[RMDB]
RNA sequence: GGGAACGACUCGAGUAGAGUCGAAAAAGGCUCGGUCCUCUCCACGUGGUCCUGACCUGUCCUCUGUGAGCAAGAGAAACAGGACUGGUUUGGGGGUGUCCUGUCUCAGUGGACACAGGACACCACGCAUAAGGAUCACGUUCGCGUGAUCCUUAUGAAAAGAAACAACAACAACAAC
Reactivity to DMS in 0.01 (KOAc 150mM, MgCl2 10mM, bicine 150mM(pH8.5), 24C), signal-to-noise 5, nucleotides 027 to 126: a080g010g010c020u010c070g010g000u000c010c020u000c050u000c020c050a130c110g010u010g010g010u000c000c000u000g000a090c050c040u010g010u000c040c000u000c040u000g010u020g010a090g020c180a180a050g000a080g010a090a140a060c100a040g010g000a060c030u000g010g010u000u000u000g010g020g010g010g010u000g010u000c000c000u000g010u000c140u000c040a180g020u000g010g010a030c070a030c010a020g000g000a020c010a040c000c010a030c040g010
Reactivity to 2A3 in 0.01 (KOAc 150mM, MgCl2 10mM, bicine 150mM(pH8.5), 24C), signal-to-noise 4, nucleotides 027 to 126: a010g090g000c050u040c080g070g040u060c010c010u020c030u020c010c020a050c040g050u060g030g040u030c000c000u020g020a070c000c010u020g000u020c010c020u000c050u050g040u050g090a140g060c100a210a050g050a020g020a140a100a030c020a030g020g020a020c030u070g050g050u070u080u120g100g000g000g000g020u010g010u000c000c000u010g030u000c000u000c030a200g140u240g190g010a010c010a000c000a010g000g000a010c010a000c010c000a020c020g040